[RMDB]
RNA sequence: GGGAACGACUCGAGUAGAGUCGAAAAUACUAGCAUUCGGUUCCAACCCUGGAUGGAUACUCAAAGGUUGGCUGAGUUCCUUGCUCCGGCCUUGGUUCCGAUGCUCCAUCCAAGGCCGGAAACCAAACAAGUAGUCCAUAUUCGUAUGGACUACUUGAAAAGAAACAACAACAACAAC
Reactivity to 2A3 in 0.01 (KOAc 150mM, MgCl2 10mM, bicine 150mM(pH8.5), 24C), signal-to-noise 1, nucleotides 027 to 126: u140a010c070u040a030g050c020a060u030u100c040g030g020u110u060c020c000a010a020c020c000c000u040g080g070a090u070g060g160a070u150a240c050u050c100a060a030a020g060g000u020u010g030g000c030u040g020a020g030u020u050c000c010u030u110g060c040u010c000c000g000g000c000c000u010u010g010g000u090u050c020c010g030a040u070g040c020u020c020c010a020u010c000c000a000a000g030g000c000c000g000g000a000a000a010c000c000a030a020a060
Reactivity to DMS in 0.01 (KOAc 150mM, MgCl2 10mM, bicine 150mM(pH8.5), 24C), signal-to-noise 7, nucleotides 027 to 126: u010a090c090u000a080g010c070a060u000u000c040g000g000u010u000c030c010a030a050c020c010c040u010g010g010a060u010g010g020a160u010a060c170u000c040a050a090a080g010g010u000u000g000g010c180u000g000a100g010u000u000c010c020u000u010g020c160u000c000c000g010g000c000c000u000u000g000g010u000u000c070c040g000a060u010g010c040u000c050c050a070u000c000c000a010a020g000g010c010c010g010g000a000a020a060c140c140a070a090a180